[RMDB]
RNA sequence: GGGAACGACUCGAGUAGAGUCGAAAAAGGUACUGUCUAGUCUAGCGUGUCGUACCUAGCAUGGCUAGUGAUCGGUACUGAUCUGAGUGUGCAGUACAGUACGGUACACGAUCCUAGACUCGUCAUGCUCGAUGGCGGGAUUCGUCCCGCCAUCGAGAAAAGAAACAACAACAACAAC
Reactivity to 2A3 in 0.01 (KOAc 150mM, MgCl2 10mM, bicine 150mM(pH8.5), 24C), signal-to-noise 1, nucleotides 027 to 126: a040g150g000u050a010c060u060g040u050c060u040a000g030u040c000u030a010g010c020g070u130g000u040c010g040u020a060c030c010u030a000g000c020a290u190g120g090c030u030a020g110u030g200a060u010c010g060g080u050a070c000u040g060a220u000c000u000g050a040g070u220g170u160g050c020a010g150u100a060c000a000g000u020a010c050g050g000u000a010c120a040c000g000a000u040c000c000u000a050g000a100c000u010c010g010u020c020a060u110g020
Reactivity to DMS in 0.01 (KOAc 150mM, MgCl2 10mM, bicine 150mM(pH8.5), 24C), signal-to-noise 1, nucleotides 027 to 126: a090g000g020u020a060c110u000g040u000c050u000a070g000u000c070u010a030g000c000g000u000g020u000c020g070u010a200c010c010u000a070g030c020a030u000g010g000c000u010a010g010u020g000a010u000c000g020g010u000a070c030u010g000a290u010c030u000g020a130g030u010g010u000g010c090a180g080u000a130c060a050g000u000a060c050g020g010u000a030c150a130c020g010a040u000c100c230u010a030g010a010c030u000c080g000u000c020a050u000g020
Source: RMDB library OK2TRN, as collected in RNAgym. Chemical mapping of a 177-nucleotide RNA with 2A3 and DMS. For 2A3 the reverse transcriptase was SuperScript II with manganese. The RNA was probed in 150 mM KOAc, 10 mM MgCl2 and 150 mM bicine (pH 8.5) at 24 C. Values cover nucleotides 27 to 126.